Structure probing data (2A3 and DMS) for a 207-nucleotide construct. It was measured as part of the RMDB library M2RFPK. Values cover nucleotides 27 to 156. DMS adducts were read by reverse transcription with MarathonRT. The RNA was probed in 150 mM KOAc, 10 mM MgCl2 and 150 mM bicine (pH 8.5) at 24 C. For DMS, 2,945 sequencing reads were counted.
[RMDB]
RNA sequence: GGGAACGACUCGAGUAGAGUCGAAAAUGCUGUCGUUGACAGCGCCCAACGCUUCACAACCUGAAAGAAGCGCCUGUUAUCAGGACGGUUGAUGCAUUUACCGGUGCAGACCUCUGCAAACACCGGGUUUAACAAGCAUCUUUCGAGAUGCUUGUAAGUGUGCAUUAGGAUUCGUCCUAAUGCACACAAAAGAAACAACAACAACAAC
Reactivity to 2A3 in 0.01 (KOAc 150mM, MgCl2 10mM, bicine 150mM(pH8.5), 24C), signal-to-noise 3, nucleotides 027 to 156: u120g000c010u010g000u020c040g300u090u300g010a000c000a000g000c000g020c010c000c000a050a020c010g020c010u010u000c010a050c020a150a030c000c010u020g000a020a010a000g000a000a000g000c020g030c010c000u130g020u260u130a160u300c020a000g030g000a010c030g000g010u000u010g020a080u120g000c080a040u030u080u180a070c000c010g000g000u020g000c010a010g060a170c000c140u220c030u120g040c070a060a100a020c040a010c010c000g000g000g010u040u140u030a020a000c000a000a000g000c000a000u000c000u010u040u050c110g110a020g000a000u000g000c000u000u000g000u000a000a030
Reactivity to DMS in 0.01 (KOAc 150mM, MgCl2 10mM, bicine 150mM(pH8.5), 24C), signal-to-noise 2, nucleotides 027 to 156: u000g010c000u010g000u000c030g000u000u020g000a030c000a050g020c010g000c050c010c000a100a110c010g000c010u020u000c010a110c030a040a090c050c020u040g000a100a230a300g010a010a020g000c000g040c000c050u000g040u010u020a220u020c040a050g010g000a100c110g010g010u000u020g000a100u010g010c000a070u000u010u000a090c010c020g010g030u010g000c030a150g000a090c090c000u030c040u000g020c040a160a180a040c000a010c000c010g000g000g010u000u000u000a140a050c000a000a050g010c000a020u000c020u000u000u000c300g000a040g030a020u010g010c000u000u020g000u000a000a160